[RMDB]
RNA sequence: GGGAACGACUCGAGUAGAGUCGAAAAAUAUCAUAAUUAACAAAGUUGCUACUAUGUCUGCAAAGUUUAAUCGAAUAAUUUGCCAGUGAUAUGAUGACAUUGUCACAAAGAUCACAAGGGACACAGACAUAGAGACCCAGUUCGCUGGGUCUCUAUGAAAAGAAACAACAACAACAAC
Reactivity to DMS in 0.01 (KOAc 150mM, MgCl2 10mM, bicine 150mM(pH8.5), 24C), signal-to-noise 2, nucleotides 027 to 126: a050u020a070u020c110a080u080a020a060u030u020a120a040c090a170a120a060g000u000u000g000c010u010a060c000u010a070u000g000u050c010u000g080c000a000a030a140g010u080u020u050a000a110u010c180g060a060a120u000a050a050u000u010u020g000c010c210a010g000u000g000a050u010a160u050g000a030u000g030a000c030a150u000u060g040u000c000a010c060a000a040a090g000a030u000c090a050c060a090a030g040g020g000a140c120a020c020a060g000a170
Reactivity to 2A3 in 0.01 (KOAc 150mM, MgCl2 10mM, bicine 150mM(pH8.5), 24C), signal-to-noise 3, nucleotides 027 to 126: a010u140a070u050c040a040u090a180a070u260u160a040a060c050a090a270a060g090u020u050g020c000u020a020c000u050a080u050g000u000c030u040g020c010a000a070a130g000u000u240u170a050a100u110c090g020a060a030u080a110a160u000u030u150g090c010c000a000g010u030g000a010u000a000u020g270a210u000g000a020c020a150u130u300g000u020c000a000c000a180a070a070g150a030u000c000a000c000a080a090g030g060g000a030c010a000c000a050g050a000
The record gives the reactivity of an RNA of 177 nucleotides to DMS and 2A3. Reactivities are given for positions 27 through 126. It was measured as part of the RMDB library RFM100.